An RNA of 177 nucleotides, treated with DMS and 2A3 and read out base by base. Values cover nucleotides 27 to 126. For 2A3 the reverse transcriptase was SuperScript II with manganese. The DMS profile rests on 1,327 reads. Source: RMDB library OK2TST, as collected in RNAgym.
RNA sequence: GGGAACGACUCGAGUAGAGUCGAAAAGCAGAGCAAGCACCUGUAGCUACUCAAACUGAAGAAGUAGAUGAAAACAGAACUGUUAAAGCAAUGCCUUCAGUACGUAAAUACGCACGUGAAAAAGGUGACGUAAGGGGAGGUUCGCCUCCCCUUACGUAAAAGAAACAACAACAACAAC
Reactivity to DMS in 0.01 (KOAc 150mM, MgCl2 10mM, bicine 150mM(pH8.5), 24C), signal-to-noise 2, nucleotides 027 to 126: g040c090a070g020a130g000c030a140a130g000c050a070c050c000u000g000u010a140g000c030u000a100c010u000c030a120a110a120c030u030g000a040a070g000a080a090g000u000a060g000a080u010g000a090a110a030a000c040a040g000a070a120c220u000g020u000u000a050a080a060g010c010a100a090u000g000c080c040u000u000c030a090g010u000a010c090g000u010a080a060a110u000a030c100g010c020a010c020g020u010g000a030a050a040a110a080g050g000u020g020
Reactivity to 2A3 in 0.01 (KOAc 150mM, MgCl2 10mM, bicine 150mM(pH8.5), 24C), signal-to-noise 2, nucleotides 027 to 126: g000c020a000g030a000g080c030a040a030g050c030a030c000c020u050g010u100a010g020c030u060a080c000u010c000a110a110a100c050u060g030a050a000g060a070a000g090u060a020g050a190u100g050a060a110a030a040c030a000g090a070a050c100u060g060u090u100a140a050a030g050c040a050a080u130g030c010c020u000u020c030a010g000u030a000c000g000u010a000a160a080u170a060c100g000c000a000c020g020u040g030a130a050a000a010a020g100g020u080g030